[RMDB]
RNA sequence: GGGAACGACUCGAGUAGAGUCGAAAAAUGGACUAGAAGAUCUAACGAAUGAGGAAAUGGCUAGAUUGGAUUUAGGUCACUUGAUGAGUGACAUGAUCAACAGACCAGAAUCUUUUUUAAUAUCACCCAUACAGAGGGAAUUCGUUCCCUCUGUAUGAAAAGAAACAACAACAACAAC
Reactivity to DMS in 0.01 (KOAc 150mM, MgCl2 10mM, bicine 150mM(pH8.5), 24C), signal-to-noise 9, nucleotides 027 to 126: a090u000g000g010a090c060u010a100g010a120a100g000a050u010c030u000a040a070c080g010a080a080u010g010a100g010g010a080a090a100u010g010g010c030u000a050g010a110u000u000g010g010a070u000u000u000a080g010g010u000c000a020c040u000u000g010a120u010g010a060g010u000g000a030c030a050u000g000a030u000c010a050a080c110a110g000a080c010c010a110g010a070a080u000c000u000u010u010u000u000u010a050a120u010a090u010c080a100c060c040
Reactivity to 2A3 in 0.01 (KOAc 150mM, MgCl2 10mM, bicine 150mM(pH8.5), 24C), signal-to-noise 9, nucleotides 027 to 126: a000u080g020g010a010c040u050a080g050a110a020g030a150u030c010u050a040a050c070g090a100a070u110g020a050g060g060a020a090a090u050g020g010c020u030a050g030a300u020u060g090g010a020u040u070u080a100g060g000u010c010a010c020u050u140g220a140u250g040a080g020u010g000a010c010a020u050g010a020u020c010a010a040c010a040g150a160c010c010a010g020a060a060u060c020u040u070u010u030u020u050a120a060u120a050u110c030a060c050c010
Chemical mapping of a 177-nucleotide RNA with DMS and 2A3.
For DMS the reverse transcriptase was MarathonRT.
High DMS reactivity at an A or C suggests that its Watson-Crick edge is free.
Conditions: 150 mM KOAc, 10 mM MgCl2 and 150 mM bicine (pH 8.5), 24 C.
Reactivities are given for positions 27 through 126.